[RMDB]
RNA sequence: GGGAACGACUCGAGUAGAGUCGAAAAUCGCUAAGCUUCGGCUUAGCGAAAAGUCGCGGCUUGAGGGCGUGUACGGCUGCGCACACACUCGACCCUCAAGCCAAAGCAUCGUGUUCGCACGAUGCAACUAGAUCGGAUUCUUCGGAAUCCGAUCUAGAAAAGAAACAACAACAACAAC
Reactivity to DMS in 0.01 (KOAc 150mM, MgCl2 10mM, bicine 150mM(pH8.5), 24C), signal-to-noise 2, nucleotides 027 to 126: u000c020g000c000u000a010a010g010c000u000u010c120g020g020c030u000u000a000g000c000g000a000a030a030a050g000u000c040g030c300g000g000c000u000u010g020a050g010g030g000c000g000u000g010u000a190c020g000g010c030u000g010c010g010c010a130c230a040c060a130c010u000c000g000a040c000c040c000u000c010a010a010g000c010c010a010a030a030g020c000a000u020c000g030u000g010u010u010c060g000c000a010c040g000a010u000g030c010a010a060
Reactivity to 2A3 in 0.01 (KOAc 150mM, MgCl2 10mM, bicine 150mM(pH8.5), 24C), signal-to-noise 1, nucleotides 027 to 126: u000c000g000c000u000a010a000g000c010u020u180c300g080g000c000u000u040a000g000c000g000a000a000a000a000g000u000c010g030c090g020g010c010u000u000g010a000g000g000g010c010g000u010g010u010a010c000g000g040c040u010g000c020g030c000a010c000a010c010a030c020u000c010g050a080c000c010c000u020c000a000a000g000c000c000a010a000a000g000c000a010u000c010g000u000g060u050u080c210g030c090a000c010g000a000u000g000c000a020a020

Structure probing data (DMS and 2A3) for a 177-nucleotide construct. Conditions: 150 mM KOAc, 10 mM MgCl2 and 150 mM bicine (pH 8.5), 24 C. 2A3 adducts were read by reverse transcription with SuperScript II with manganese. The data come from the RNA Mapping Database (RMDB), library M2PK50.